[RMDB]
RNA sequence: GGGAACGACUCGAGUAGAGUCGAAAACGAUUAAUCGAUAUUAAUUACGUAAUUACGAUUAGCUAAUUAAUGCCGAUCGCGGCUACGAUAUCGAUAUCGGCAUCGCGCGCGCGUACGGCCGCGCGCGUACUACUCUGACGUUCGCGUCAGAGUAGUAAAAAGAAACAACAACAACAAC
Reactivity to 2A3 in 0.01 (KOAc 150mM, MgCl2 10mM, bicine 150mM(pH8.5), 24C), signal-to-noise 3, nucleotides 027 to 126: c030g000a020u070u160a120a060u050c000g000a020u010a010u080u180a240a100u190u090a090c050g010u020a020a050u040u060a000c000g040a020u070u040a010g030c030u020a100a170u300u100a160a060u300g000c010c000g030a010u060c020g000c030g070g030c020u030a020c040g010a020u010a010u070c030g010a000u010a010u100c010g070g000c060a030u040c050g020c000g050c000g000c010g050c010g060u100a060c080g140g040c050c020g000c000g120c010g050c000g020
Reactivity to DMS in 0.01 (KOAc 150mM, MgCl2 10mM, bicine 150mM(pH8.5), 24C), signal-to-noise 2, nucleotides 027 to 126: c030g030a050u000u000a040a020u000c020g000a050u000a030u010u010a030a120u000u010a300c090g010u000a030a020u000u000a070c010g000a050u000u000a090g000c030u000a060a110u010u000a130a050u010g010c020c010g010a000u000c010g010c060g010g020c100u000a000c020g020a210u000a020u000c010g020a010u010a000u000c000g000g000c210a100u010c130g000c010g120c000g100c050g090c100g020u010a060c180g010g020c130c030g060c020g030c010g110c010g060

This 177-nucleotide RNA was probed chemically with 2A3 and DMS. It was measured as part of the RMDB library OK2TRN. The 2A3 profile rests on 1,961 reads. 2A3 is a SHAPE reagent: it acylates the 2'-hydroxyl of flexible nucleotides of all four kinds. The reactions ran in a buffer of 150 mM KOAc, 10 mM MgCl2 and 150 mM bicine (pH 8.5), at 24 C.